[RMDB]
RNA sequence: GGGAACGACUCGAGUAGAGUCGAAAAAUAAGUCCUUUCGAGGACUUAUAAUGCUGCGCAAAGAGGACCUGGGGGUGUCUGGGCUGCUAAACUCAUCAGCCGUGGCUUUGGGGUUCGCCCCAAAGAACUCCUUAUAUCUGUUCGCAGAUAUAAGGAGAAAAGAAACAACAACAACAAC
Reactivity to 2A3 in 0.01 (KOAc 150mM, MgCl2 10mM, bicine 150mM(pH8.5), 24C), signal-to-noise 2, nucleotides 027 to 126: a000u010a000a000g000u010c010c000u020u020u100c200g090a010g000g010a000c010u000u000a000u000a010a050u120g010c020u050g050c040g010c080a100a080a060g080a110g060g020a080c030c020u040g010g010g040g020g000u030g030u010c040u070g050g000g000c000u010g000c020u090a080a070a060c030u040c050a090u020c030a060g070c050c020g010u030g080g000c000u010u010u000g020g010g020g000u020u020c160g070c000c000c000c000a000a000a000g000a010a010
Reactivity to DMS in 0.01 (KOAc 150mM, MgCl2 10mM, bicine 150mM(pH8.5), 24C), signal-to-noise 4, nucleotides 027 to 126: a020u000a000a000g000u000c000c000u000u000u020c150g010a020g020g010a020c000u000u000a000u000a050a080u000g020c040u010g000c080g010c080a060a130a120g000a110g000g010a070c040c050u000g020g010g000g010g020u000g010u000c040u000g010g000g010c030u000g000c130u000a050a070a120c080u000c050a090u000c060a030g010c030c030g020u000g010g000c000u000u000u000g010g010g010g020u000u010c230g000c000c000c000c000a000a000a020g000a090a140